[RMDB]
RNA sequence: GGGAACGACUCGAGUAGAGUCGAAAAAGCAUCUGAGUCUGCCACGGAUUCAUCCGAUUCGGCAACUCGGGCUGGGGAAUACAAAUCUCAAACCGAGGCUCUGAAAAACCAAACAGAGGUAUUUAAAAGUUCCACUAGGUUUCGACCUAGUGGAACUAAAAGAAACAACAACAACAAC
Reactivity to 2A3 in 0.01 (KOAc 150mM, MgCl2 10mM, bicine 150mM(pH8.5), 24C), signal-to-noise 2, nucleotides 027 to 126: a000g050c030a080u080c080u070g010a010g020u140c130u040g030c000c000a020c020g000g040a100u280u190c060a060u010c060c000g030a070u080u050c020g000g000c020a010a000c000u000c000g000g000g060c000u000g000g000g110g000a010a010u030a090c130a040a180a100u040c000u020c000a120a120a090c030c080g000a010g080g060c030u000c000u030g080a020a000a010a010a010c030c020a070a090a090c040a000g020a000g000g100u050a120u000u140u220a060a120a040
Reactivity to DMS in 0.01 (KOAc 150mM, MgCl2 10mM, bicine 150mM(pH8.5), 24C), signal-to-noise 1, nucleotides 027 to 126: a000g000c100a010u180c000u020g000a000g000u000c220u000g040c000c000a170c000g000g000a000u000u000c250a010u070c000c000g000a060u070u100c300g000g020c000a110a000c000u000c000g000g040g090c110u000g000g010g000g000a210a280u000a040c120a000a070a140u050c000u000c080a000a070a260c120c170g000a000g000g020c050u000c000u000g000a070a170a010a040a200c010c050a020a020a190c010a000g000a070g000g000u000a000u000u070u090a000a140a130